Structure probing data (2A3 and DMS) for a 177-nucleotide construct. The reactions ran in a buffer of 150 mM KOAc, 10 mM MgCl2 and 150 mM bicine (pH 8.5), at 24 C. For DMS the reverse transcriptase was MarathonRT. It was measured as part of the RMDB library OK2TRN.
[RMDB]
RNA sequence: GGGAACGACUCGAGUAGAGUCGAAAAGCUGGCUGGUCAUUUGGCAUUAGCAUAUUAUCCUCGAUCCCACAUGGGCUAAUUGCAUGGUGAAGGACACUAUAUGCUGAAUUCAACUCCAUGGUGGAAGGGAUAUCAAGGCAUUCGUGCCUUGAUAUCCAAAAGAAACAACAACAACAAC
Reactivity to 2A3 in 0.01 (KOAc 150mM, MgCl2 10mM, bicine 150mM(pH8.5), 24C), signal-to-noise 2, nucleotides 027 to 126: g020c020u050g050g010c000u050g000g070u050c040a110u020u120u140g050g020c010a010u040u090a000g000c030a000u080a040u230u070a060u040c000c020u020c020g040a150u120c000c020c010a030c000a010u040g020g010g000c010u030a040a050u060u090g010c020a030u040g010g000u030g060a160a050g180g080a040c000a020c030u110a090u020a010u290g010c020u030g060a070a080u120u060c020a020a030c000u010c030c010a020u050g010g030u010g000g080a090a110g050
Reactivity to DMS in 0.01 (KOAc 150mM, MgCl2 10mM, bicine 150mM(pH8.5), 24C), signal-to-noise 2, nucleotides 027 to 126: g000c020u010g000g000c030u000g030g000u020c100a100u010u000u010g010g010c040a060u010u020a030g020c000a010u030a080u010u000a120u000c030c000u000c110g010a170u000c030c000c010a090c040a020u000g010g010g000c050u000a060a030u000u000g000c000a050u000g020g010u010g020a160a130g000g000a210c060a010c020u000a070u030a070u000g020c010u000g000a080a050u010u030c180a070a060c080u010c010c030a010u000g000g030u000g020g010a100a100g050